RNA sequence: GGGAACGACUCGAGUAGAGUCGAAAAUUGUGGGCUGCACACCCUGACCUGACGCCUGAUGCCGUUGCAACACAUCACCGUCUGAUUCGUUCACUGAUUGGGAGGUAUGACUGCUACGAGGUGAAAAACGACGAUAAGUUUUCGAACUUAUCGUCGUAAAAGAAACAACAACAACAAC
Reactivity to DMS in 0.01 (KOAc 150mM, MgCl2 10mM, bicine 150mM(pH8.5), 24C), signal-to-noise 3, nucleotides 027 to 126: u020u020g010u000g000g000g010c060u000g010c040a090c100a090c030c030c000u020g000a130c050c010u000g030a060c080g020c040c070u000g010a070u020g000c050c020g040u010u020g020c020a080a040c100a110c050a080u000c040a100c050c030g000u030c040u000g000a090u000u000c030g000u010u000c020a060c040u010g000a140u000u000g000g010g000a040g010g040u030a070u020g010a070c070u010g000c010u000a030c070g020a100g010g000u000g000a030a030a020a120
Reactivity to 2A3 in 0.01 (KOAc 150mM, MgCl2 10mM, bicine 150mM(pH8.5), 24C), signal-to-noise 5, nucleotides 027 to 126: u100u080g050u120g040g010g040c030u080g000c020a030c020a010c030c010c000u010g030a060c020c020u040g010a030c020g020c010c020u040g020a100u090g070c050c020g080u060u060g040c030a100a020c000a010c000a090u050c040a020c030c010g090u040c040u030g010a040u090u120c060g040u060u030c050a050c100u040g050a080u090u090g020g010g000a050g040g000u060a070u140g080a090c050u030g020c000u040a070c060g050a060g020g000u050g040a060a040a000a010